[RMDB]
This 207-nucleotide RNA was probed chemically with 2A3. Reactivities are given for positions 27 through 156.

RNA sequence: GGGAACGACUCGAGUAGAGUCGAAAAGGGGUCGACGUUUGACGCUCUCGACAUGGAUUUGUGGCUGAAGCCUCCACGGCCACUGAUCCAACAGCGAGAGCCGAGUCGACGGAGGCACCCAAAUCAACCCUGGACAGUUCGCUGUCCAGGGUUGAAAUCGACUAUCACUGUUCGCAGUGAUAGUCGAAAAAGAAACAACAACAACAAC
Reactivity to 2A3 in 0.01 (KOAc 150mM, MgCl2 10mM, bicine 150mM(pH8.5), 24C), signal-to-noise 2, nucleotides 027 to 156: g080g030g000g010u000c000g010a010c000g020u080u240u210g000a000c000g030c000u020c000u000c010g180a190c150a300u300g000g000a010u020u010u030g000u000g000g000c010u030g020a120a000g030c010c000u010c000c010a040c020g000g000c000c000a000c000u000g000a000u010c000c010a230a040c080a090g000c000g000a010g000a000g000c000c000g000a010g010u000c000g000a000c000g000g000a000g000g000c000a040c000c000c000a030a090a010u050c000a000a000c020c000c000u070g000g000a010c000a030g010u110u120c090g160c240u000g000u000c010c010a010g000g000g000u000u000g010a000a000a000